[RMDB]
RNA sequence: GGGAACGACUCGAGUAGAGUCGAAAAGCUUGGGAUGAGUCAUUUAUCAGUGGUGUGUGAAUGUGCAGGCCUAGGACAUUACUGUAUGCUACUGUAGACAAACACUGAACAGUUAGGAUACACUAAACUAUUCCAGUGGAUUCGUCCACUGGAAUAGAAAAGAAACAACAACAACAAC
Reactivity to 2A3 in 0.01 (KOAc 150mM, MgCl2 10mM, bicine 150mM(pH8.5), 24C), signal-to-noise 4, nucleotides 027 to 126: g020c020u060u050g020g000g060a050u050g050a040g080u030c020a030u040u080u160a120u070c010a050g040u030g040g000u020g040u000g020u040g100a060a040u030g020u070g040c010a020g050g050c020c010u070a080g010g050a020c020a070u060u130a070c050u020g010u010a010u040g130c000u000a000c000u010g050u080a030g050a080c060a060a230a010c100a070c150u060g050a070a000c020a010g020u110u070a010g030g010a010u030a030c010a010c080u120a020a060a130
Reactivity to DMS in 0.01 (KOAc 150mM, MgCl2 10mM, bicine 150mM(pH8.5), 24C), signal-to-noise 4, nucleotides 027 to 126: g010c050u000u010g020g010g000a070u000g000a080g010u000c020a060u000u000u000a060u010c040a040g010u000g010g030u000g020u010g000u010g010a080a060u020g020u010g020c020a070g010g010c070c020u000a060g000g020a080c120a090u010u000a070c150u000g010u000a030u000g000c020u000a040c000u000g010u010a080g000a130c110a070a090a100c190a070c120u000g000a070a040c040a020g000u000u010a030g010g000a060u020a010c020a040c120u000a060a090a150
Structure probing data (2A3 and DMS) for a 177-nucleotide construct. For 2A3, 3,151 sequencing reads were counted. The RNA was probed in 150 mM KOAc, 10 mM MgCl2 and 150 mM bicine (pH 8.5) at 24 C. For 2A3 the reverse transcriptase was SuperScript II with manganese.